[RMDB]
RNA sequence: GGGAACGACUCGAGUAGAGUCGAAAAGCGCUAUAUCACAUCGCAGAAGCGCUGGUGCGCUGGAUGGCACCAAUCCUCUCCUUCACCGCUGAUGAAGUGUGGGGCUACCUGCCGGGCGAACGUGAAAGACUAGGCUCACGUUCGCGUGAGCCUAGUCAAAAGAAACAACAACAACAAC
Reactivity to 2A3 in 0.01 (KOAc 150mM, MgCl2 10mM, bicine 150mM(pH8.5), 24C), signal-to-noise 3, nucleotides 027 to 126: g040c050g010c090u090a050u010a020u300c050a040c010a090u030c050g010c040a040g050a170a020g000c000g030c050u020g110g070u210g000c050g010c070u080g090g150a200u110g100g020c020a000c030c020a020a040u080c000c010u020c000u030c000c010u000u060c040a030c040c060g100c250u120g050a280u020g010a060a020g040u060g060u030g230g020g030g000c000u030a070c010c000u020g030c000c000g090g070g000c020g020a090a070c090g030u030g040a080a040a020
Reactivity to DMS in 0.01 (KOAc 150mM, MgCl2 10mM, bicine 150mM(pH8.5), 24C), signal-to-noise 3, nucleotides 027 to 126: g010c100g030c080u010a050u000a180u000c010a060c030a100u010c040g000c040a090g010a120a060g010c000g040c020u010g030g040u010g020c000g030c030u010g000g000a100u000g020g020c010a020c050c080a120a190u000c000c000u000c000u000c010c000u000u000c000a030c030c150g010c200u010g010a110u010g000a040a020g010u010g030u010g010g010g010g010c170u000a070c130c120u000g000c030c000g020g010g000c000g030a030a070c130g010u000g000a050a110a100